[RMDB]
RNA sequence: GGGAACGACUCGAGUAGAGUCGAAAACAGGCCGCCGCCGCGGCGGUCCCUCGGCGAUGUCCGUGCGCGUGCAGACGUCGCUGCACAUCUUUCAGGUCUCGUAAGACUGCUGCGCUCUCGGCUGCUGAUUUAAUGAUCGGUUCGCCGAUCAUUAAAUAAAAGAAACAACAACAACAAC
Reactivity to DMS in 0.01 (KOAc 150mM, MgCl2 10mM, bicine 150mM(pH8.5), 24C), signal-to-noise 5, nucleotides 027 to 126: c150a200g010g010c010c050g010c020c040g010c300c090g000c050g010g010c000g010g000u000c010c030c010u010c050g000g000c020g020a050u010g010u000c020c070g030u000g000c070g000c130g000u010g000c030a070g000a080c040g000u000c020g000c020u010g000c140a060c110a090u020c050u010u020u000c090a090g000g010u000c040u010c140g000u020a160a100g000a040c040u010g010c030u000g000c010g000c170u030c070u010c020g010g000c000u000g000c020u010g010
Reactivity to 2A3 in 0.01 (KOAc 150mM, MgCl2 10mM, bicine 150mM(pH8.5), 24C), signal-to-noise 9, nucleotides 027 to 126: c030a020g030g010c010c010g000c000c010g090c050c040g080c050g030g000c000g000g010u020c020c000c000u060c020g030g000c020g040a060u100g030u020c040c060g060u070g040c100g020c040g070u180g000c010a010g020a070c030g030u070c040g000c020u010g020c010a020c000a080u070c070u060u240u140c060a050g050g040u020c020u040c120g120u110a090a040g030a050c020u020g010c000u020g010c020g000c020u020c020u030c030g020g000c000u020g000c020u030g040

An RNA of 177 nucleotides, treated with DMS and 2A3 and read out base by base. High DMS reactivity at an A or C suggests that its Watson-Crick edge is free. 2A3 adducts were read by reverse transcription with SuperScript II with manganese. Conditions: 150 mM KOAc, 10 mM MgCl2 and 150 mM bicine (pH 8.5), 24 C. For 2A3, 15,329 sequencing reads were counted. The DMS profile rests on 13,729 reads. The data come from the RNA Mapping Database (RMDB), library OK1LIB.